RNA sequence: GGGAACGACUCGAGUAGAGUCGAAAAUUAUUAAAUCUCGUCGACAAACAGGGGGAAAGGGGCGUGGUCUAGCGACGGCAGCACGGGCGGAGGCGUUCACCGGCUCCGGCGUCCUUCGCGUUUAAGCCGGAAGAUUACAGUUCGCUGUAAUCUUCCGAAAAGAAACAACAACAACAAC
Reactivity to DMS in 0.01 (KOAc 150mM, MgCl2 10mM, bicine 150mM(pH8.5), 24C), signal-to-noise 3, nucleotides 027 to 126: u020u100a090u080u000a030a050a070u010c010u000c030g000u030c070g000a080c070a060a070a110c120a110g040g000g020g000g000a020a030a110g030g010g010g000c070g010u000g000g000u040c050u020a120g000c090g000a070c150g000g010c110a110g020c090a060c070g030g010g030c000g000g010a050g000g010c050g010u000u030c120a100c080c000g000g000c030u010c030c050g000g000c040g010u020c040c040u000u020c030g030c030g000u010u010u010a070a110g010c170
Reactivity to 2A3 in 0.01 (KOAc 150mM, MgCl2 10mM, bicine 150mM(pH8.5), 24C), signal-to-noise 3, nucleotides 027 to 126: u240u100a030u060u200a060a140a150u050c060u000c050g060u040c010g030a080c060a050a180a050c030a070g090g030g030g010g030a120a100a030g000g040g040g010c050g060u100g000g080u020c070u060a030g030c010g050a040c000g040g000c040a010g010c000a060c050g000g010g020c050g000g000a000g060g010c010g000u100u050c060a100c080c020g050g020c010u000c010c000g020g020c000g000u040c000c000u060u050c050g020c000g040u030u070u100a030a000g040c050

An RNA of 177 nucleotides, treated with DMS and 2A3 and read out base by base. Values cover nucleotides 27 to 126. The RNA was probed in 150 mM KOAc, 10 mM MgCl2 and 150 mM bicine (pH 8.5) at 24 C.